[RMDB]
RNA sequence: GGGAACGACUCGAGUAGAGUCGAAAACUUAUUAGUAACUAAUCCACAGCAAGUAUAGGAGAACAGGUUUUUAACUAUUUUUAGGCAGAUAAAAAAUAGUAUUUGACAGUCUAACACUAACUGAACACCACGCUCUCUUACUUCGGUAAGAGAGCAAGUGUUACUCAAUGUUCGCAUUGAGUAACACAAAAGAAACAACAACAACAAC
Reactivity to DMS in 0.01 (KOAc 150mM, MgCl2 10mM, bicine 150mM(pH8.5), 24C), signal-to-noise 1, nucleotides 027 to 156: c080u000u000a150u000u000a100g000u020a040a110c010u050a060a070u010c000c020a080c090a130g050c040a040a160g030u010a110u020a120g000g010a140g000a140a060c050a130g020g000u000u020u020u010u040a050a120c000u000a020u000u000u000u000u000a040g010g000c050a080g010a130u010a000a010a000a010a030a010u000a020g010u000a120u000u000u000g000a140c030a100g030u030c050u000a070a090c040a100c100u000a150a080c040u010g040a030a040c060a080c140c050a110c090g000c000u000c000u000c010u000u010a000c000u000u000c300g010g040u000a000a000g000a070g000a010g000c020a000a010
Reactivity to 2A3 in 0.01 (KOAc 150mM, MgCl2 10mM, bicine 150mM(pH8.5), 24C), signal-to-noise 3, nucleotides 027 to 156: c000u090u090a010u130u160a260g080u090a030a050c050u020a110a010u050c040c030a050c050a060g070c050a040a080g030u110a110u170a180g030g040a070g010a090a040c050a040g020g010u030u030u000u030u030a030a010c010u000a020u000u010u010u020u020a040g040g000c030a030g040a100u110a050a070a000a010a000a010u010a000g020u020a110u090u060u060g040a030c010a000g020u030c030u100a120a000c050a030c120u080a120a000c060u030g060a070a010c030a030c110c010a040c070g000c000u000c000u000c000u000u000a010c010u020u030c040g030g010u000a000a000g000a000g000a000g000c010a000a010
The record gives the reactivity of an RNA of 207 nucleotides to DMS and 2A3.
The data come from the RNA Mapping Database (RMDB), library M2RFPK.
For 2A3, 2,524 sequencing reads were counted.